[RMDB]
RNA sequence: GGGAACGACUCGAGUAGAGUCGAAAACGAGGAGCAGGCGGAGGCAGCCCUCCUCUACUACGAUGGAGGAGGAUGGUGGAUCAUGCCGGGAGAGAGGAACGGGGAGGCAGUCUCCUGGGGGACUCCCCAGUGUCGGAGGAUUCGUCCUCCGACACUGAAAAGAAACAACAACAACAAC
Reactivity to DMS in 0.01 (KOAc 150mM, MgCl2 10mM, bicine 150mM(pH8.5), 24C), signal-to-noise 3, nucleotides 027 to 126: c120g000a110g000g000a060g000c100a070g000g020c080g010g010a110g000g020c060a140g000c120c020c000u010c010c000u000c000u000a050c090u020a100c300g020a210u000g000g010a040g010g000a010g000g010a060u010g010g020u000g000g010a130u010c090a080u000g000c050c020g000g010g030a100g000a100g000a120g010g000a090a070c110g010g000g000g010a070g000g010c090a080g010u010c020u000c010c040u000g020g030g010g000g000a150c100u000c000c000c010
Reactivity to 2A3 in 0.01 (KOAc 150mM, MgCl2 10mM, bicine 150mM(pH8.5), 24C), signal-to-noise 1, nucleotides 027 to 126: c040g010a060g050g020a040g000c060a060g080g070c060g040g070a050g080g000c030a010g020c040c020c010u010c020c000u000c000u010a020c000u030a050c050g300a280u100g000g030a020g000g010a000g070g000a050u070g030g080u130g030g030a100u080c040a070u210g060c050c000g000g010g010a060g000a020g000a010g000g080a100a070c060g000g010g000g020a010g030g020c010a020g040u010c020u010c020c020u020g000g000g000g000g090a020c040u080c000c000c000